Source: RMDB library OK3TST, as collected in RNAgym. The record gives the reactivity of an RNA of 207 nucleotides to 2A3 and DMS. 2A3 adducts were read by reverse transcription with SuperScript II with manganese. The 2A3 profile rests on 3,334 reads. The RNA was probed in 150 mM KOAc, 10 mM MgCl2 and 150 mM bicine (pH 8.5) at 24 C. Reactivities are rounded to 0.1 and cut off at 0 and 3.
[RMDB]
RNA sequence: GGGAACGACUCGAGUAGAGUCGAAAAGGGAGAGAAUUGCAGACUUUAUCGAUUGCCUGUGACAUAGGUUCUAAGGUGAUUUGUGGAGUGUAUUUGAUGGGUAUUCAAGUACCAAUGACAUGAUAAUGUAAUAAUUGGGAUCUAAGGAGGCUUUCCCGUUAAAAUUGACUUUCGAGUCAAUUUUAACAAAAGAAACAACAACAACAAC
Reactivity to 2A3 in 0.01 (KOAc 150mM, MgCl2 10mM, bicine 150mM(pH8.5), 24C), signal-to-noise 4, nucleotides 027 to 156: g020g000g010a040g000a010g010a070a090u100u060g040c040a020g040a150c050u120u160u060a090u170c060g060a050u040u060g020c000c010u040g020u040g020a010c030a070u210a070g130g000u110u000c030u050a060a000g010g000u020g030a040u050u070u080g030u040g020g030a030g020u060g010u050a090u040u040u040g080a070u060g060g050g020u050a040u060u090c030a060a010g010u010a020c000c030a020a030u080g030a010c010a030u050g050a100u130a230a040u120g040u040a060a070u070a100a070u150u030g010g010g000a010u010c020u040a050a080g030g020a010g060g000c010u010u010u010c010c010c000
Reactivity to DMS in 0.01 (KOAc 150mM, MgCl2 10mM, bicine 150mM(pH8.5), 24C), signal-to-noise 3, nucleotides 027 to 156: g020g020g020a070g000a080g010a060a100u000u010g010c040a080g020a070c040u010u000u030a120u000c070g010a100u010u010g010c030c010u000g000u000g030a060c060a250u010a180g020g020u000u000c040u010a120a070g020g060u000g000a060u000u020u000g050u000g000g020a100g030u020g010u000a040u000u010u000g020a080u010g010g030g030u000a090u000u000c050a030a100g020u000a080c010c030a060a070u000g000a070c050a060u000g010a100u010a060a090u010g000u000a050a070u010a060a090u000u010g010g000g020a060u000c040u010a050a110g020g020a070g010g010c050u000u000u000c000c000c030